[RMDB]
RNA sequence: GGGAACGACUCGAGUAGAGUCGAAAAAUGGCAGGCGUUGCGGCAAACUCGUCCCUGGCGAUUUCAAGGGUUUUGGUCUCGCCGUUAUUGCCACGCCGGGCCUGGGCGAGGGCAGCCCUAGCGCCUAAGCCACGUAGUCAUUCGUGACUACGUGGCUAAAAGAAACAACAACAACAAC
Reactivity to DMS in 0.01 (KOAc 150mM, MgCl2 10mM, bicine 150mM(pH8.5), 24C), signal-to-noise 2, nucleotides 027 to 126: a020u010g010g000c070a060g010g030c020g020u000u010g040c300g000g000c020a050a160a170c000u000c070g020u000c000c010c120u010g020g000c040g010a080u090u000u000c060a070a060g020g040g000u000u000u000u000g010g010u010c030u020c080g010c020c000g030u000u010a080u010u000g000c010c050a080c180g010c100c080g000g010g030c040c150u010g010g000g000c010g000a030g010g000g000c110a220g010c010c010c010u020a020g010c020g000c000c000u000a080
Reactivity to 2A3 in 0.01 (KOAc 150mM, MgCl2 10mM, bicine 150mM(pH8.5), 24C), signal-to-noise 1, nucleotides 027 to 126: a030u130g090g040c050a020g000g030c040g030u050u070g040c060g090g020c050a010a010a000c000u000c000g020u080c030c000c010u050g030g040c050g050a090u000u120u100c110a140a110g190g040g110u070u130u140u080g050g040u020c000u050c040g000c020c010g020u000u110a050u040u170g000c020c000a000c000g130c040c000g050g000g030c030c030u080g020g010g020c000g020a020g050g010g050c050a010g040c040c000c000u000a000g000c050g000c000c010u000a000
Structure probing data (DMS and 2A3) for a 177-nucleotide construct. DMS (dimethyl sulfate) methylates the pairing face of unpaired adenines and cytosines. Reactivities are given for positions 27 through 126. For DMS the reverse transcriptase was MarathonRT. The reactions ran in a buffer of 150 mM KOAc, 10 mM MgCl2 and 150 mM bicine (pH 8.5), at 24 C.